The record gives the reactivity of an RNA of 177 nucleotides to 2A3 and DMS. DMS (dimethyl sulfate) methylates the pairing face of unpaired adenines and cytosines. The 2A3 profile rests on 915 reads. Source: RMDB library M2PK90, as collected in RNAgym. The reactions ran in a buffer of 150 mM KOAc, 10 mM MgCl2 and 150 mM bicine (pH 8.5), at 24 C.

RNA sequence: GGGAACGACUCGAGUAGAGUCGAAAAUUUAAGAGCGUAGAUGUCUCUGUGACGAUACGAGUAAGUGACUCUCGUGUACUACUGACGAAUGAGACAGAGACAUUUAUGCUCAGUGUCAGUCAAGGAACAUAGUCGCUGGUUUCGACCAGCGACUAUGAAAAGAAACAACAACAACAAC
Reactivity to 2A3 in 0.01 (KOAc 150mM, MgCl2 10mM, bicine 150mM(pH8.5), 24C), signal-to-noise 1, nucleotides 027 to 126: u090u120u130a160a030g000a000g000c010g070u010a000g000a010u010g010u030c000u000c020u020g000u000g000a070c110g020a030u020a070c020g020a020g020u030a110a160g090u100g280a040c010u000c020u060c150g060u060g000u000a120c040u010a020c010u070g080a130c030g020a090a140u150g070a090g010a050c010a000g020a000g010a000c000a000u000u000u000a010u010g000c000u000c000a000g000u000g030u000c080a040g030u030c030a050a030g000g020a140a030
Reactivity to DMS in 0.01 (KOAc 150mM, MgCl2 10mM, bicine 150mM(pH8.5), 24C), signal-to-noise 1, nucleotides 027 to 126: u000u010u000a130a100g000a020g010c000g070u000a010g010a000u000g000u000c000u020c030u010g020u000g010a110c060g000a060u010a000c010g000a120g010u000a050a090g020u000g000a070c080u020c150u010c120g000u000g030u000a030c050u010a070c020u000g020a110c070g000a060a050u010g000a190g000a030c010a040g020a020g010a000c010a000u010u000u000a000u000g000c000u000c000a040g010u000g020u000c050a060g010u010c110a050a070g000g020a030a150